[RMDB]
Chemical mapping of a 177-nucleotide RNA with 2A3 and DMS. For 2A3 the reverse transcriptase was SuperScript II with manganese. The DMS profile rests on 1,029 reads. As a SHAPE reagent, 2A3 marks flexible, mostly unpaired nucleotides at the ribose 2'-OH.
RNA sequence: GGGAACGACUCGAGUAGAGUCGAAAAGAUAUGGACCACUCUUUGAAGUUGUGUUUACCAUCGGAAACGAUGGAAACGAAUUCAAAGAGGUGGUCCUAAGUCAAAGGACAGACUUCGGUCUGUCCAACUGUCAAGGUGUGUUCGCACACCUUGACAGAAAAGAAACAACAACAACAAC
Reactivity to 2A3 in 0.01 (KOAc 150mM, MgCl2 10mM, bicine 150mM(pH8.5), 24C), signal-to-noise 1, nucleotides 027 to 126: g040a030u080a030u180g020g010a000c000c000a000c030u010c040u030u000u000g010a020a040g170u300u210g300u030g080u300u130u080a300c010c000a000u010c010g000g000a140a040a030c030g000a000u060g020g000a010a010a010c000g030a000a070u020u000c000a040a000a000g000a080g080g050u010g020g000u000c000c000u020a040a020g000u000c030a070a070a260g010g010a010c000a060g020a000c000u020u160c300g060g000u000c000u000g000u010c000c020a000a010
Reactivity to DMS in 0.01 (KOAc 150mM, MgCl2 10mM, bicine 150mM(pH8.5), 24C), signal-to-noise 1, nucleotides 027 to 126: g000a090u000a300u020g000g010a040c000c000a040c000u000c000u000u000u010g000a020a010g010u000u000g020u010g010u010u000u000a210c020c000a000u000c000g000g000a180a060a250c010g030a000u000g010g000a000a000a000c000g000a100a110u010u000c010a000a000a040g010a060g000g030u020g030g010u030c000c000u000a000a150g000u000c100a050a160a080g000g030a010c000a010g000a010c000u000u030c280g040g010u000c030u010g000u020c000c000a000a050

Description: It was measured as part of the RMDB library TTRDES. The 2A3 profile rests on 1,550 reads.